[RMDB]
Structure probing data (2A3) for a 207-nucleotide construct. The reactions ran in a buffer of 150 mM KOAc, 10 mM MgCl2 and 150 mM bicine (pH 8.5), at 24 C.

RNA sequence: GGGAACGACUCGAGUAGAGUCGAAAAAGCCGAGGACUACGGUCCUCGGCAACAACCGUCACAACGUCUUCCUGGCGUGACGGGGUUAACCCCAACGGAGCAAGUGCGAGCUUACGAGCUCGCACAAUUUAGGAGAAUUCCUUCGGGAAUUCUCCAACUCACUUAUAACGUUCGCGUUAUAAGUGAGAAAAGAAACAACAACAACAAC
Reactivity to 2A3 in 0.01 (KOAc 150mM, MgCl2 10mM, bicine 150mM(pH8.5), 24C), signal-to-noise 1, nucleotides 027 to 156: a000g010c000c000g010a000g020g010a010c010u010a020c270g070g000u040c000c000u000c000g000g050c000a000a000c000a000a010c000c000g000u010c000a000c020a190a050c060g030u020c040u210u100c040c070u220g080g000c020g000u000g000a000c010g000g000g040g000u050u060a060a050c030c000c000c020a070a030c110g150g070a060g040c050a200a150g070u030g000c040g000a000g000c030u100u060a090c280g070a010g000c000u000c060g000c000a000c010a000a000u020u010u070a030g000g000a010g000a000a000u000u000c000c000u010u090c120g080g000g000a000a000u020u000c000u000c000c010a010a000